[RMDB]
RNA sequence: GGGAACGACUCGAGUAGAGUCGAAAAGGUAAGAUACAUGACAGCUGCGCAGCAUCACUUCACGCGCUGUCAUCGGAUGUCUAGAACAUUCCUUCUAAGAAUAGCCACUGAAGAGUCUAUAAAGACGGUCGACACUAUUAUUCGUAAUAGUGUCGACAAAAGAAACAACAACAACAAC
Reactivity to 2A3 in 0.01 (KOAc 150mM, MgCl2 10mM, bicine 150mM(pH8.5), 24C), signal-to-noise 6, nucleotides 027 to 126: g100g010u080a030a040g010a040u050a050c040a010u010g010a010c000a000g050c020u300g000c020g010c020a090g070c020a130u150c060a060c110u180u120c070a020c040g000c000g000c000u000g010u000c000a000u010c000g040g030a050u060g000u000c030u020a010g050a070a010c010a040u040u030c010c000u040u080c020u050a050a040g010a060a030u060a060g040c010c010a050c070u040g020a080a010g050a070g100u000c010u010a130u110a140a170a010g050a020c050g030
Reactivity to DMS in 0.01 (KOAc 150mM, MgCl2 10mM, bicine 150mM(pH8.5), 24C), signal-to-noise 4, nucleotides 027 to 126: g010g040u020a040a010g000a030u000a040c050a020u000g020a010c000a030g010c010u070g060c030g080c150a120g050c180a200u020c300a140c160u050u000c170a240c040g020c010g010c020u000g020u000c000a000u010c080g000g040a220u040g000u000c010u000a110g020a070a090c140a150u010u000c000c030u000u050c110u000a130a050g010a030a080u010a060g000c030c060a080c070u010g010a050a010g010a140g030u000c000u020a060u020a060a080a070g000a030c110g020